Structure probing data (2A3) for a 207-nucleotide construct. The data come from the RNA Mapping Database (RMDB), library OK3TST.
RNA sequence: GGGAACGACUCGAGUAGAGUCGAAAACGGAAAGAUUCUAAUGCUCUCUUAGCAGAUGCUUUGUGCUAUCGUGAACAAUAGGGCACAGAUCUUUUAUUGAUAUUCAAUCACAGCAUCUUAUCAGUCUGAGUUUUUUAGCUCAUUCAAGAAAUCCAUACCAUGCCCAUUACUUCGGUAAUGGGCAUGGAAAAGAAACAACAACAACAAC
Reactivity to 2A3 in 0.01 (KOAc 150mM, MgCl2 10mM, bicine 150mM(pH8.5), 24C), signal-to-noise 3, nucleotides 027 to 156: c050g040g060a080a030a020g050a060u230u070c010u130a140a050u110g000c020u000c000u000c000u020u060a030g000c050a020g040a020u040g030c030u150u100u260g060u050g020c060u080a060u140c060g150u030g040a040a000c000a060a100u060a070g000g000g000c030a000c030a130g030a090u000c020u030u120u140u050a090u030u100g030a020u010a090u160u140c080a040a050u070c010a010c010a100g080c000a040u070c030u100u110a090u120c040a000g050u020c050u030g010a010g030u020u030u010u000u170u130a000g000c000u020c050a040u050u050c040a100a000g050a100a150a030u110c020c160a020u180a070
Conditions: 150 mM KOAc, 10 mM MgCl2 and 150 mM bicine (pH 8.5), 24 C.